Chemical mapping of a 177-nucleotide RNA with DMS and 2A3. For 2A3 the reverse transcriptase was SuperScript II with manganese.

[RMDB]
RNA sequence: GGGAACGACUCGAGUAGAGUCGAAAACUCGUCUCGGAUUGGCUCAUUCUCAGGUCGGGCGAGGGUCCUCAGUUCUCUCUAUUCUUUCUUUUUGAAAGAGGAGACUGCUGGACCAAACGCCCGAACCGACUAGUUACUAGUUCGCUAGUAACUAGUCAAAAGAAACAACAACAACAAC
Reactivity to DMS in 0.01 (KOAc 150mM, MgCl2 10mM, bicine 150mM(pH8.5), 24C), signal-to-noise 7, nucleotides 027 to 126: c030u000c010g010u000c010u000c010g010g010a140u010u010g010g010c150u000c040a090u000u000c020u000c040a170g010g010u000c000g010g010g010c000g020a120g000g010g000u000c000c000u000c010a010g000u000u000c030u000c000u010c180u010a190u010u000c000u000u000u000c000u000u010u000u010u010g000a010a010a010g000a070g010g000a020g010a020c000u000g010c190u000g010g000a020c000c000a010a040a080c010g000c000c000c000g000a010a010c040c050
Reactivity to 2A3 in 0.01 (KOAc 150mM, MgCl2 10mM, bicine 150mM(pH8.5), 24C), signal-to-noise 9, nucleotides 027 to 126: c010u000c010g050u010c020u020c030g080g090a120u040u090g040g010c020u020c050a080u090u020c030u020c050a030g010g010u000c000g000g000g000c000g000a020g020g020g000u000c000c000u000c000a080g020u270u040c020u000c000u000c040u090a240u220u010c000u060u020u020c010u050u300u110u150u240g010a010a000a000g000a010g010g010a000g010a000c000u010g030c040u010g000g000a000c000c000a110a260a050c000g000c000c000c000g000a020a010c000c000
The RNA was probed in 150 mM KOAc, 10 mM MgCl2 and 150 mM bicine (pH 8.5) at 24 C.